Chemical mapping of a 177-nucleotide RNA with 2A3 and DMS. For 2A3 the reverse transcriptase was SuperScript II with manganese. Values cover nucleotides 27 to 126. For DMS, 13,512 sequencing reads were counted.
[RMDB]
RNA sequence: GGGAACGACUCGAGUAGAGUCGAAAAAAAAGGUUUUGACUAUUGUCAACGCCCUGGUAGACAGCAAAGCCAUCCGUCGCGACGAGGCGGGUCUCAUCUACAACGCCCUAUUGGAACGCGUGGCGCGCCAUUUAAUCAUGUUCGCAUGAUUAAAUGGAAAAGAAACAACAACAACAAC
Reactivity to 2A3 in 0.01 (KOAc 150mM, MgCl2 10mM, bicine 150mM(pH8.5), 24C), signal-to-noise 8, nucleotides 027 to 126: a010a000a000a020g080g000u070u060u020u020g040a040c030u080a130u300u300g010u020c010a010a010c020g010c000c000c000u020g050g020u040a040g000a040c040a020g020c030a080a040a020g010c010c000a030u030c030c020g040u020c020g020c050g100a120c040g040a070g010g010c000g010g020g050u020c020u010c010a070u020c010u050a050c020a110a030c040g020c000c010c010u070a160u070u150g110g030a100a030c030g010c030g050u060g050g020c060g000c010g020
Reactivity to DMS in 0.01 (KOAc 150mM, MgCl2 10mM, bicine 150mM(pH8.5), 24C), signal-to-noise 8, nucleotides 027 to 126: a040a030a070a050g010g010u000u000u000u000g010a040c020u000a140u010u000g010u000c010a030a040c090g000c010c000c030u000g020g010u000a070g010a060c220a060g020c060a050a070a120g010c030c020a050u000c080c020g010u000c060g020c100g010a100c140g010a110g000g010c020g010g000g010u000c040u000c090a080u000c070u010a050c070a080a100c080g000c010c010c020u000a140u010u010g010g010a070a080c080g010c100g020u000g010g010c030g020c140g010